[RMDB]
RNA sequence: GGGAACGACUCGAGUAGAGUCGAAAAUACUGCAGUAGACUCGAUCGAUCCGUACUGACAUGAUAGCACAUGACGUCUAGGAGGAUCACUCGCUAGCUAGCAUCUGAUCGUACGACUACUAGACUAGCUCUCUCUUAUUGUUCGCAAUAAGAGAGAGAAAAGAAACAACAACAACAAC
Reactivity to DMS in 0.01 (KOAc 150mM, MgCl2 10mM, bicine 150mM(pH8.5), 24C), signal-to-noise 9, nucleotides 027 to 126: u010a130c200u010g010c110a050g010u000a090g000a060c040u000c010g010a180u000c020g010a020u010c020c040g010u000a130c050u000g020a130c050a050u010g010a090u010a100g000c150a140c080a040u000g010a140c140g010u000c020u000a030g010g000a100g010g010a060u000c070a070c060u010c060g020c010u000a070g020c110u010a060g020c030a040u000c060u000g010a050u000c030g010u010a150c150g010a260c050u000a050c020u010a040g010a090c050u000a110g010
Reactivity to 2A3 in 0.01 (KOAc 150mM, MgCl2 10mM, bicine 150mM(pH8.5), 24C), signal-to-noise 9, nucleotides 027 to 126: u220a030c120u110g070c020a020g010u050a010g010a040c020u000c020g040a080u010c020g000a010u000c030c010g020u070a040c030u050g060a020c010a070u120g050a110u120a090g090c080a040c030a190u090g060a090c090g020u010c030u040a020g020g030a040g040g040a100u070c040a030c070u040c060g040c080u030a050g080c050u080a010g000c010a040u030c040u060g030a080u030c020g050u130a070c040g070a060c030u030a010c010u020a040g040a090c010u030a030g040